[RMDB]
RNA sequence: GGGAACGACUCGAGUAGAGUCGAAAAUCAGCUAUGCUUCGGCAUAGCUGAAAAAACCGUAGGUCGGUCAUUCUCUUGGACCCUAAUUUCGAAAGAGAUUAGGCUAGAGAAUGACACGACCUAAACGGAAAAAACUCUGCGGUUCGCCGCAGAGUAACAUAUUUUGACGAUUCGUCGUCAAAAUAUGAAAAGAAACAACAACAACAAC
Reactivity to DMS in 0.01 (KOAc 150mM, MgCl2 10mM, bicine 150mM(pH8.5), 24C), signal-to-noise 1, nucleotides 027 to 156: u010c010a030g050c010u000a020u000g010c010u000u020c300g010g080c000a000u000a000g000c000u010g020a000a030a060a090a110a060c000c010g050u000a040g010g020u000c000g000g000u000c000a000u000u010c000u000c000u000u030g050g000a160c300c000c000u000a000a010u000u000u000c000g020a210a170a260g010a000g040a010u000u000a010g010g000c000u000a000g000a000g000a040a000u000g000a010c010a010c000g020a010c000c000u000a000a020a040c010g020g000a010a070a030a170a090a040c000u000c000u020g030c000g010g040u000u020c300g000c010c010g030c000a010g000a020g020u000a020a170
Reactivity to 2A3 in 0.01 (KOAc 150mM, MgCl2 10mM, bicine 150mM(pH8.5), 24C), signal-to-noise 2, nucleotides 027 to 156: u030c000a000g000c000u000a000u010g010c020u060u170c300g160g000c000a000u000a000g070c000u000g010a000a000a000a000a000a000c010c000g010u030a000g000g000u000c010g000g000u000c000a000u010u000c010u000c000u120u150g220g070a230c030c010c020u010a000a000u020u020u020c020g040a130a050a070g000a010g000a010u010u000a000g000g010c010u000a000g000a000g000a010a000u000g000a010c000a010c000g000a000c000c000u000a000a000a000c020g000g060a140a060a000a050a020a000c000u000c000u000g000c010g030g130u050u100c280g030c080c000g000c010a000g010a000g000u010a010a000
The record gives the reactivity of an RNA of 207 nucleotides to DMS and 2A3. Conditions: 150 mM KOAc, 10 mM MgCl2 and 150 mM bicine (pH 8.5), 24 C. In probing experiments dimethyl sulfate is read out at A N1 and C N3, which are open when not base-paired. Source: RMDB library RNAMAK, as collected in RNAgym.